Source information: Conditions: 150 mM KOAc, 10 mM MgCl2 and 150 mM bicine (pH 8.5), 24 C. Structure probing data (2A3) for a 177-nucleotide construct. It was measured as part of the RMDB library OK1LIB. For 2A3 the reverse transcriptase was SuperScript II with manganese.

RNA sequence: GGGAACGACUCGAGUAGAGUCGAAAACACGCCGCCGAACACGAAGAACAACACCACCGCCACCAACGGCAGCGCCAGCACUUCCAUUCGCCGUUGGUCGGUGGCGAUGGUGCCGGUCAACGCCUCGCGCCGAGCACAAGUUCGCUUGUGCUCGGCGAAAAGAAACAACAACAACAAC
Reactivity to 2A3 in 0.01 (KOAc 150mM, MgCl2 10mM, bicine 150mM(pH8.5), 24C), signal-to-noise 2, nucleotides 027 to 126: c070a000c020g020c020c010g100c010c050g050a050a020c030a020c070g030a060a040g020a120a040c070a010a010c000a030c040c000a000c000c000g000c050c030a020c010c010a000a010c020g010g050c010a040g000c020g100c050c020a070g000c050a030c130u220u180c150c030a060u090u090c090g000c040c000g000u010u020g020g000u010c010g060g030u010g000g000c010g020a000u010g000g000u040g000c020c040g000g040u060c030a020a010c050g030c000c070u020c030g060

The 2A3 profile rests on 936 reads.